[RMDB]
RNA sequence: GGGAACGACUCGAGUAGAGUCGAAAAGCUGUACGCCGUUCCCCAGCAGCCUACGGUGGGCAACGGCGUAGGUAUCGGUCACGUGGAUGUGGCCAUGCCGGCGAGUGCUCCAUCGAUAGCUGGCUCACGAGCAGUUCAGGUUCGCCUGAACUGCUCGAAAAGAAACAACAACAACAAC
Reactivity to DMS in 0.01 (KOAc 150mM, MgCl2 10mM, bicine 150mM(pH8.5), 24C), signal-to-noise 1, nucleotides 027 to 126: g020c000u000g010u010a080c150g020c060c020g050u000u000c000c000c010c220a000g020c020a050g030c060c030u000a090c120g060g060u000g030g000g000c050a010a000c010g030g030c020g000u000a000g020g040u000a000u000c290g060g020u000c010a020c000g040u040g030g010a130u010g000u000g000g010c000c000a000u010g000c000c000g000g040c010g000a260g000u000g000c020u030c030c000a000u000c010g000a140u000a030g010c040u000g000g000c060u000c140a210
An RNA of 177 nucleotides, treated with DMS and read out base by base.
For DMS the reverse transcriptase was MarathonRT.
It was measured as part of the RMDB library OK2TST.
The reactions ran in a buffer of 150 mM KOAc, 10 mM MgCl2 and 150 mM bicine (pH 8.5), at 24 C.